[RMDB]
RNA sequence: GGGAACGACUCGAGUAGAGUCGAAAACCGGCGCUUUCGAGCGCCGGCGUGAAUCCUAAGUCGUCUCGAGGGACAUGAUGCGACAUCGGAAACGAUGUCCAUCAACAGCCUCCCCACCGAGACGAUAUGGAAAAGGCAGGUACUUUCGAGUACCUAAUACCCUAAUUCCAUUCGUGGAAUUAGGGUAAAAAGAAACAACAACAACAAC
Reactivity to 2A3 in 0.01 (KOAc 150mM, MgCl2 10mM, bicine 150mM(pH8.5), 24C), signal-to-noise 2, nucleotides 027 to 156: c000c010g020g000c030g000c000u190u130u210c300g090a040g000c010g000c000c000g000g000c010g010u070g120a070a130u020c000c000u030a150a020g030u000c000g000u000c000u000c010g020a030g000g000g000a000c000a060u040g010a010u010g030c160g010a000c000a000u000c000g000g060a120a050a000c020g000a000u000g000u010c010c000a000u000c000a000a040c050a020g040c000c090u050c010c000c020c000a190c010c010g000a010g000a000c000g000a000u000a010u040g040g020a000a090a080a090g160g070c150a020g020g010u010a000c000u040u060u300c300g080a020g000u000a000c000c000u000a010a080
Reactivity to DMS in 0.01 (KOAc 150mM, MgCl2 10mM, bicine 150mM(pH8.5), 24C), signal-to-noise 1, nucleotides 027 to 156: c000c000g010g000c000g060c010u000u000u000c170g010a060g040c010g040c000c000g000g140c000g000u020g000a260a100u000c000c000u010a080a270g010u000c000g020u000c000u000c020g000a150g000g020g010a040c060a300u020g010a010u000g000c030g000a010c000a020u000c000g020g000a110a200a300c010g000a010u000g000u000c000c000a000u010c000a030a090c060a140g060c110c070u000c040c000c000c070a190c220c000g020a010g020a020c010g000a000u000a090u000g000g000a000a070a090a060g020g020c050a060g000g000u000a000c010u020u010u020c300g000a090g040u000a000c000c010u000a020a070
Structure probing data (2A3 and DMS) for a 207-nucleotide construct. The reactions ran in a buffer of 150 mM KOAc, 10 mM MgCl2 and 150 mM bicine (pH 8.5), at 24 C. For 2A3 the reverse transcriptase was SuperScript II with manganese.